[RMDB]
RNA sequence: GGGAACGACUCGAGUAGAGUCGAAAAGAUAUGGAUUUACGGGAGCUCGUAGUCGGAAACGACUACAGAGCUUUGAUCGUAUGUCCUAAGUCAAAGACAGAAUGGUACUUCGGUACCAUUCUGUCAAGAGUGUAAUUUGGUUCGCCAAAUUACACUCAAAAGAAACAACAACAACAAC
Reactivity to DMS in 0.01 (KOAc 150mM, MgCl2 10mM, bicine 150mM(pH8.5), 24C), signal-to-noise 2, nucleotides 027 to 126: g010a020u000a010u010g000g000a010u000u010u000a010c000g000g010g020a000g030c000u000c010g000u000a000g010u000c010g010g000a010a010a010c000g020a010c000u000a000c000a050g020a010g020c000u000u010u010g000a100u010c000g000u000a010u000g010u000c000c010u000a000a090g000u000c000a110a110a130g000a010c000a010g010a010a010u000g010g010u000a000c000u000u020c220g010g000u000a000c010c000a000u000u000c000u000g010u000c000a030a050
Reactivity to 2A3 in 0.01 (KOAc 150mM, MgCl2 10mM, bicine 150mM(pH8.5), 24C), signal-to-noise 1, nucleotides 027 to 126: g000a000u000a010u030g000g000a000u010u020u000a000c000g000g000g010a020g010c000u000c010g000u010a000g000u000c000g000g000a090a010a000c010g010a000c000u000a000c050a030g000a000g030c030u140u080u000g000a000u000c010g000u010a000u000g000u000c000c000u010a010a010g000u000c050a060a010a000g000a000c000a000g000a000a000u000g000g020u010a010c030u080u180c300g060g000u020a010c000c010a000u000u010c000u010g000u000c000a000a010

Chemical mapping of a 177-nucleotide RNA with DMS and 2A3. For 2A3 the reverse transcriptase was SuperScript II with manganese. Conditions: 150 mM KOAc, 10 mM MgCl2 and 150 mM bicine (pH 8.5), 24 C.